[RMDB]
RNA sequence: GGGAACGACUCGAGUAGAGUCGAAAAAAAAAAUCCGCGCACAACUGCAGGGGCCGCUGAAGGAAAAGUCUUCGGACGAAAGGUUCGUGCGCGUGUUUGAAGGACUCGCGCCAGCUAAGAAGGCCGCGGUAUUAAUCCUGUUCGCAGGAUUAAUACCAAAAGAAACAACAACAACAAC
Reactivity to 2A3 in 0.01 (KOAc 150mM, MgCl2 10mM, bicine 150mM(pH8.5), 24C), signal-to-noise 2, nucleotides 027 to 126: a000a000a000a000a000a000u030c010c000g000c000g030c020a000c010a040a160c040u110g010c070a090g010g060g120g000c040c020g000c050u040g040a000a010g040g040a070a140a150a100g050u000c010u000u040c030g120g050a140c050g090a130a020a080g070g000u020u090c110g010u030g000c010g000c010g000u010g010u000u020u080g060a070a020g070g020a050c020u020c030g040c000g030c010c010a040g040c040u090a190a110g030a060a090g140g040c030c050g030c030
Reactivity to DMS in 0.01 (KOAc 150mM, MgCl2 10mM, bicine 150mM(pH8.5), 24C), signal-to-noise 1, nucleotides 027 to 126: a000a000a020a010a000a000u030c050c010g010c050g000c030a020c070a030a050c050u010g010c110a130g000g030g010g030c030c060g020c070u000g000a050a050g000g000a110a070a080a110g010u030c020u000u010c080g000g000a080c060g010a060a030a120g010g000u000u000c120g020u000g010c000g010c020g010u000g000u000u020u040g000a120a040g000g000a050c060u000c030g000c050g030c020c040a180g020c130u010a050a100g030a170a280g000g010c000c100g000c150